[RMDB]
RNA sequence: GGGAACGACUCGAGUAGAGUCGAAAAUAAGUGUUCGCACUUAGACGGGGUCUCGAUCCCAUCUCUAGCGUGGGCUUUGAUCAUACUGAAGCCUCCACGGUAUGGGAGCCUCGGGUGGGAAUGAGACGGAGGCACCCAACUGACAAUUUCGAUUGUCCAAGUAAACUUUAUUCGUAAAGUUUACUUGAAAAGAAACAACAACAACAAC
Reactivity to DMS in 0.01 (KOAc 150mM, MgCl2 10mM, bicine 150mM(pH8.5), 24C), signal-to-noise 3, nucleotides 027 to 156: u000a010a030g020u000g030u000u010c250g060c020a020c010u000u000a040g000a160c100g000g030g040g010u000c020u000c050g000a110u000c000c000c000a000u000c010u000c150u000a140g030c140g050u010g020g020g010c020u000u000u000g000a100u000c040a040u000a040c020u010g000a040a110g010c010c010u000c010c010a300c010g010g010u000a210u010g000g000g010a020g020c020c000u000c040g040g000g030u000g000g000g020a060a110u010g000a070g010a090c020g020g050a030g080g050c030a050c010c010c010a070a070c080u000g020a050c040a030a060u000u000u000c150g000a110u000u000g000u000c010
Reactivity to 2A3 in 0.01 (KOAc 150mM, MgCl2 10mM, bicine 150mM(pH8.5), 24C), signal-to-noise 8, nucleotides 027 to 156: u060a010a010g010u010g050u100u180c230g060c090a000c010u020u010a040g040a130c110g040g020g050g020u010c010u010c030g160a230u070c010c020c010a010u020c100u030c080u140a140g150c100g140u300g050g010g000c010u300u180u050g030a030u060c010a000u000a010c020u030g050a120a020g000c000c000u010c000c000a010c010g000g000u000a010u010g010g000g020a010g000c000c010u040c080g040g000g000u000g000g030g000a120a240u250g000a010g000a010c040g010g000a000g000g000c000a020c000c010c000a030a070c040u030g000a000c000a010a020u050u180u170c170g130a030u020u020g000u000c020